[RMDB]
RNA sequence: GGGAACGACUCGAGUAGAGUCGAAAACACUAUUGGUUCGCCAAUAGUGAAACGGCUAGCCGAAGCCGAACGGCAAGCCGAAGCCGAACGGCAACGGCAAAAAAACUGCGUUCUUCGGAACGCAGAACACAGAAUAGCUGUUCGCAGCUAUUCUGUGAAAAGAAACAACAACAACAAC
Reactivity to DMS in 0.01 (KOAc 150mM, MgCl2 10mM, bicine 150mM(pH8.5), 24C), signal-to-noise 2, nucleotides 027 to 126: c010a000c000u000a000u000u000g000g000u010u000c220g050c020c000a000a030u000a000g040u000g000a040a070a090c050g010g000c100u010a150g000c000c000g000a060a300g010c000c010g020a000a280c010g020g000c010a050a240g030c140c080g000a100a020g020c000c020g000a020a280c060g010g000c010a040a270c000g000g000c010a000a000a040a030a030a040a080c010u020g000c000g000u000u000c010u000u010c160g010g000a010a020c000g010c000a000g000a020a150